[RMDB]
RNA sequence: GGGAACGACUCGAGUAGAGUCGAAAAGUAAGAAAGAAAGAAAUCUGACAGAAUGACGGAUUCGAUCGUUGUGGUCGGCGGGCCACCACGUCAUUCCUUCGCACUGUCUCCGGGCAGACCGCCAUAAAAAAGCGGAUCUACUUCGGUAGAUCCGCAACCCCUGAUGUUUCUUCGGAAACAUCAGGGGAAAAGAAACAACAACAACAAC
Reactivity to 2A3 in 0.01 (KOAc 150mM, MgCl2 10mM, bicine 150mM(pH8.5), 24C), signal-to-noise 2, nucleotides 027 to 156: g020u060a000a050g050a130a100a000g080a090a120a040g040a030a130a090u080c080u110g000a030c050a070g140a150a060u140g020a070c040g000g030a020u070u130c170g060a070u170c060g020u000u040g010u000g030g010u070c080g000g060c090g010g010g050c000c000a010c000c020a000c000g040u000c040a020u050u030c010c000u020u070c060g000c020a030c020u010g000u000c040u050c090c130g050g010g000c010a010g020a140c010c010g020c010c010a040u230a050a130a010a020a020a000g000c010g010g000a000u000c000u000a000c010u000u020c100g040g000u000a000g000a000u010c000c000g000c000a000a000
Source: RMDB library M2RFPK, as collected in RNAgym.
The record gives the reactivity of an RNA of 207 nucleotides to 2A3.
Values cover nucleotides 27 to 156.
For 2A3 the reverse transcriptase was SuperScript II with manganese.
For 2A3, 675 sequencing reads were counted.
The reactions ran in a buffer of 150 mM KOAc, 10 mM MgCl2 and 150 mM bicine (pH 8.5), at 24 C.